[RMDB]
RNA sequence: GGGAACGACUCGAGUAGAGUCGAAAAGUCCCCACUUUCGAGUGGGGACAAUGAAAGUUUUGGCACUCGCAGCCCGCAGCGUUGGUGCUCCCACGCGGUGCAUAACUGCCUACUUCGGUAGGCAGAAUUCUAAUAUGUGAUUCGUCACAUAUUAGAAAAAAGAAACAACAACAACAAC
Reactivity to 2A3 in 0.01 (KOAc 150mM, MgCl2 10mM, bicine 150mM(pH8.5), 24C), signal-to-noise 6, nucleotides 027 to 126: g000u000c000c000c000c000a010c010u100u090u080c230g120a010g000u010g010g000g000g010a000c020a000a000u090g020a010a040a070g060u050u120u210u220g060g000c030a010c030u100c060g020c040a030g030c010c010c010g010c020a100g020c030g070u120u150g040g030u120g050c020u060c010c000c000a040c020g010c030g040g000u040g020c020a040u100a220a100c010u000g010c000c000u000a010c010u010u060c220g090g000u010a000g000g000c000a000g000a000a000
Reactivity to DMS in 0.01 (KOAc 150mM, MgCl2 10mM, bicine 150mM(pH8.5), 24C), signal-to-noise 7, nucleotides 027 to 126: g010u000c000c000c000c000a000c010u000u000u010c130g010a030g050u000g010g010g000g010a000c000a000a030u000g000a110a090a110g000u000u000u010u010g010g010c010a040c020u010c050g020c050a120g010c010c020c030g020c090a080g000c060g010u010u000g010g020u010g010c060u000c040c000c030a140c120g010c040g000g010u000g020c050a090u000a060a190c010u000g000c000c000u000a000c000u000u010c170g020g010u000a000g010g000c000a000g010a030a050